An RNA of 207 nucleotides, treated with 2A3 and read out base by base.
[RMDB]
RNA sequence: GGGAACGACUCGAGUAGAGUCGAAAAGCUCUGGUAUUGAGGCCCCUCUAACAAUAAUCCAAAACUACUUCGCAGAGUAAUCUGCCGAAUCGUAGGAUGCCCAUUACUAUCUAUUUUUGGAGCAUCUAAAACUGUCAGUGCUUCGGCACUGACAGAAUCUGAUUAUCAGCUUCGGCUGAUAAUCAGAAAAAGAAACAACAACAACAAC
Reactivity to 2A3 in 0.01 (KOAc 150mM, MgCl2 10mM, bicine 150mM(pH8.5), 24C), signal-to-noise 1, nucleotides 027 to 156: g060c010u000c010u010g000g040u110a120u290u000g060a040g010g030c020c010c020c010u090c150u220a170a130c060a030a120u170a100a030u050c080c030a060a040a000a100c010u030a010c040u010u000c000g010c000a000g010a010g000u110a070a140u010c000u000g070c080c090g010a010a010u070c060g010u030a040g050g030a000u010g000c000c000c050a010u030u030a030c030u070a080u140c040u080a250u210u040u000u040u180g000g000a090g040c010a010u000c030u040a000a080a000a100c000u010g000u000c000a000g000u010g000c000u030u080c090g040g000c000a000c000u000g000a000c000a000g000a000a060